[RMDB]
RNA sequence: GGGAACGACUCGAGUAGAGUCGAAAACGUGGGUUACAAAGCAGUGCAGGGGCAUACCGAGGACCAGUCACCUCGUAAAACAACUGGAAAAAGUAUAGUCGCAAACGACGAAACUUACGCUCUAGCCGCUUAAUACCGGCUGGACGCUGCACCGAAGCUGAUUUAUAAAGUUCGCUUUAUAAAUCAGAAAAGAAACAACAACAACAAC
Reactivity to 2A3 in 0.01 (KOAc 150mM, MgCl2 10mM, bicine 150mM(pH8.5), 24C), signal-to-noise 4, nucleotides 027 to 156: c080g020u060g010g060g020u090u090a050c040a030a100a020g030c040a030g030u010g050c030a030g020g030g000g000c010a030u090a110c030c010g000a000g020g000a030c010c010a000g020u010c020a020c010c000u000c020g090u120a010a000a000a000c010a000a000c000u010g010g050a050a050a020a010a020g060u080a080u130a080g010u010c030g010c130a110a160a150c060g020a000c000g030a070a020a000c020u060u050a050c070g000c010u000c000u010a000g010c010c000g000c020u040u050a070a020u050a090c010c010g000g000c000u000g000g000a010c070g000c020u090g000c040a090c050c070g030a040a020g040
Reactivity to DMS in 0.01 (KOAc 150mM, MgCl2 10mM, bicine 150mM(pH8.5), 24C), signal-to-noise 2, nucleotides 027 to 156: c050g040u000g000g020g030u010u000a130c050a040a060a100g030c000a040g020u000g020c050a060g010g030g030g030c000a100u000a040c170c010g020a070g010g010a250c030c010a110g000u000c050a120c010c000u000c020g040u000a050a050a080a050c030a060a070c020u000g030g000a070a090a090a040a090g010u000a050u000a260g020u000c000g000c040a080a110a130c070g030a020c030g010a120a080a040c010u000u000a070c070g000c070u000c010u000a050g030c000c000g000c030u000u000a100a160u000a150c200c000g010g000c000u000g000g000a010c070g020c030u000g000c030a100c060c020g000a100a140g000

The record gives the reactivity of an RNA of 207 nucleotides to 2A3 and DMS. For 2A3 the reverse transcriptase was SuperScript II with manganese. DMS (dimethyl sulfate) methylates the pairing face of unpaired adenines and cytosines. Reactivities are given for positions 27 through 156. The DMS profile rests on 3,955 reads. The RNA was probed in 150 mM KOAc, 10 mM MgCl2 and 150 mM bicine (pH 8.5) at 24 C.